Description: Source: RMDB library OK2TRN, as collected in RNAgym. Chemical mapping of a 177-nucleotide RNA with DMS. For DMS the reverse transcriptase was MarathonRT. For DMS, 979 sequencing reads were counted.
[RMDB]
RNA sequence: GGGAACGACUCGAGUAGAGUCGAAAAGGGUAGCAGGAUUUCUGUUGAGGGGAUAUCUCGUGUUAAACAAUUAAAAGGGUUAUGCUCUGAUGUGUCCCGAGCUCCAUCAGGAUUGCUGAUCAAGUUCCCCUCCCUAAGGGUUCGCCCUUAGGGAGGGAAAAGAAACAACAACAACAAC
Reactivity to DMS in 0.01 (KOAc 150mM, MgCl2 10mM, bicine 150mM(pH8.5), 24C), signal-to-noise 1, nucleotides 027 to 126: g030g050g000u000a050g020c050a020g020g020a080u000u010u000c020u000g040u000u010g000a070g000g000g020g000a060u000a030u000c210u000c060g000u000g000u000u000a140a050a100c080a100a040u000u010a040a140a090a090g010g020g000u000u000a080u000g010c000u010c020u000g020a030u000g000u000g000u000c010c050c010g000a030g000c120u000c120c030a020u000c000a030g000g000a070u000u000g000c020u000g000a100u000c120a060a090g000u000u010c000